[RMDB]
RNA sequence: GGGAACGACUCGAGUAGAGUCGAAAAUUUCCCAGCGUGGAGUGCAGUGGCAUGAUCUCAGCUCAGUGCAUCCUACAACUCUGAGGUUCAAGCAAUUCUCGUGCCUCAGCUUACUGAGUAGCUGGGAGUAGCCACAUCGAUUCGUCGAUGUGGCUACAAAAGAAACAACAACAACAAC
Reactivity to 2A3 in 0.01 (KOAc 150mM, MgCl2 10mM, bicine 150mM(pH8.5), 24C), signal-to-noise 2, nucleotides 027 to 126: u070u040u030c010c000c000a000g040c050g020u070g030g040a110g030u020g000c020a080g100u070g100g020c060a090u120g060a180u060c050u010c070a010g030c020u020c100a030g030u040g000c010a060u040c030c010u040a060c060a150a030c050u040c030u030g010a020g000g010u020u080c000a060a040g010c040a110a180u190u040c070u040c070g040u040g050c010c000u020c010a010g000c000u030u080a040c020u010g010a040g080u070a020g060c010u000g000g000g010a030
Reactivity to DMS in 0.01 (KOAc 150mM, MgCl2 10mM, bicine 150mM(pH8.5), 24C), signal-to-noise 2, nucleotides 027 to 126: u000u010u000c000c000c010a040g070c120g050u000g000g010a070g040u010g010c030a070g020u010g000g020c040a090u000g010a140u020c100u010c040a120g000c020u000c030a010g000u010g000c180a140u000c060c020u000a130c060a120a150c080u010c020u000g010a020g000g010u000u000c040a050a050g030c300a090a140u010u000c020u000c080g000u000g010c020c010u000c030a030g000c300u000u000a090c090u000g000a070g000u000a150g020c010u000g000g000g010a100

The record gives the reactivity of an RNA of 177 nucleotides to 2A3 and DMS. It was measured as part of the RMDB library OK2TST. In probing experiments dimethyl sulfate is read out at A N1 and C N3, which are open when not base-paired. The RNA was probed in 150 mM KOAc, 10 mM MgCl2 and 150 mM bicine (pH 8.5) at 24 C. 2A3 adducts were read by reverse transcription with SuperScript II with manganese. The 2A3 profile rests on 1,872 reads.